[RMDB]
RNA sequence: GGGAACGACUCGAGUAGAGUCGAAAAAAGAUAUGGAAACAAUGAAACACCGAACUACGAUCGGGUAGAGUCGGAAACGACUCUAUCUCUAGCGUGUCGCGGUGGAGUACGUUGUUUCCUAAGUCAAUCACUUCUAAAACUUCGGUUUUAGAAGUGAAAAAGAAACAACAACAACAAC
Reactivity to DMS in 0.01 (KOAc 150mM, MgCl2 10mM, bicine 150mM(pH8.5), 24C), signal-to-noise 3, nucleotides 027 to 126: a090a110g020a030u000a300u010g010g000a000a020a000c000a010a010u000g000a300a190a160c010a000c010c000g030a150a020c030u020a110c000g010a070u000c300g000g000g030u000a000g000a010g030u000c000g010g010a050a060a120c010g020a000c000u000c000u000a000u010c000u000c090u010a100g010c020g010u000g000u000c300g020c020g010g020u000g010g000a060g010u010a090c280g010u000u000g000u000u010u000c000c000u000a010a060g010u000c050a190a210
Reactivity to 2A3 in 0.01 (KOAc 150mM, MgCl2 10mM, bicine 150mM(pH8.5), 24C), signal-to-noise 2, nucleotides 027 to 126: a000a020g100a030u140a030u170g010g000a000a030a000c020a020a070u170g060a030a010a040c010a010c000c010g020a060a010c030u110a030c190g090a100u150c060g000g000g000u010a000g010a010g000u020c020g030g030a070a040a060c010g000a000c000u000c000u020a000u010c000u000c010u020a040g110c000g030u080g030u060c140g030c020g160g010u010g000g020a000g000u020a000c100g010u010u010g000u000u000u000c000c000u010a110a000g030u000c010a010a070